[RMDB]
RNA sequence: GGGAACGACUCGAGUAGAGUCGAAAAGGUUUGGCAUACAUGCUCUAUACCUCGGCCUUCAACUGGUUGUUGUUGGCAGGUACAUUGCAUUAUUUCUUUGCACAGACUUCCAUAUUUGUAGACUGGCUAACAAGAUAGUUCGCUAUCUUGAAAAGAAACAACAACAACAAC
Reactivity to DMS in 0.01 (KOAc 150mM, MgCl2 10mM, bicine 150mM(pH8.5), 24C), signal-to-noise 7, nucleotides 027 to 129: g020g010u000u010u030g010g040c050a000u000a100c280a080u000g010c040u000c030u010a070u010a000c030c050u000c160g010g040c010c010u010u000c020a010a010c060u020g030g030u020u020g040u000u010g010u030u010g000g060c020a000g010g010u020a050c100a040u000u000g030c030a050u020u040a150u050u050u020c110u050u040u020g030c000a060c040a040g020a050c000u020u020c040c050a000u060a070u030u030u020g000u000a070g000a120c050u030g020g020c050u000a060a190
Reactivity to 2A3 in 0.01 (KOAc 150mM, MgCl2 10mM, bicine 150mM(pH8.5), 24C), signal-to-noise 9, nucleotides 027 to 129: g040g000u010u010u030g000g000c010a010u050a090c070a060u100g010c000u000c000u020a070u010a050c000c000u040c100g210g010c010c000u010u030c020a050a030c050u170g250g120u210u180g040u000u000g000u000u010g070g010c000a000g010g000u020a020c010a030u030u020g010c010a000u030u020a080u060u230u040c130u050u080u050g010c150a160c000a240g000a030c000u080u040c040c010a090u120a120u140u190u150g090u020a050g020a170c080u050g050g050c040u030a080a020